Notes
The record gives the reactivity of an RNA of 207 nucleotides to 2A3 and DMS.
RNA sequence: GGGAACGACUCGAGUAGAGUCGAAAAAUAACAUUCUUUCCACAACACUUUCUAGGACUAUCCGGAAUACCUCGACGAUACUCCGAUUAUCCUGACGCAUACACAGCAUGAAAUACUAUUUCCUCAAUAGGCUCAUUCAUCUCACUAACAGCAGUGAUCUCAUUCAAGGGUUCGCCCUUGAAUGAGAAAAAGAAACAACAACAACAAC
Reactivity to 2A3 in 0.01 (KOAc 150mM, MgCl2 10mM, bicine 150mM(pH8.5), 24C), signal-to-noise 3, nucleotides 027 to 156: a000u150a040a040c060a090u100u020c030u050u060u010c010c030a020c030a150a030c030a010c080u100u140u060c070u160a040g040g000a030c020u030a070u090c070c050g020g010a050a030u050a070c000c030u040c090g060a040c050g030a090u000a040c010u030c030c030g050a060u050u040a020u060c000c010u040g050a050c050g030c030a020u080a100c030a010c030a070g050c000a010u060g130a060a090a020u140a020c030u050a040u020u050u100c020c040u080c020a060a040u010a080g080g000c030u020c000a040u080u010c030a040u030c010u000c020a030c010u060a150a060c050a040g110c020a000g000u020g040a050
Reactivity to DMS in 0.01 (KOAc 150mM, MgCl2 10mM, bicine 150mM(pH8.5), 24C), signal-to-noise 1, nucleotides 027 to 156: a150u020a090a050c050a160u040u000c030u000u010u000c010c020a060c110a100a110c040a060c020u000u000u000c020u010a060g000g010a010c040u020a040u000c030c000g050g030a070a020u000a000c050c040u000c100g000a090c120g010a050u000a040c040u000c000c030g000a100u000u010a100u000c030c040u010g000a040c030g020c050a090u000a030c100a070c040a070g010c070a040u000g020a080a030a120u020a090c050u010a130u000u020u000c050c000u000c100a050a090u000a110g010g030c010u000c000a090u000u020c080a020u000c050u000c030a030c020u020a120a100c050a110g000c060a000g010u000g000a070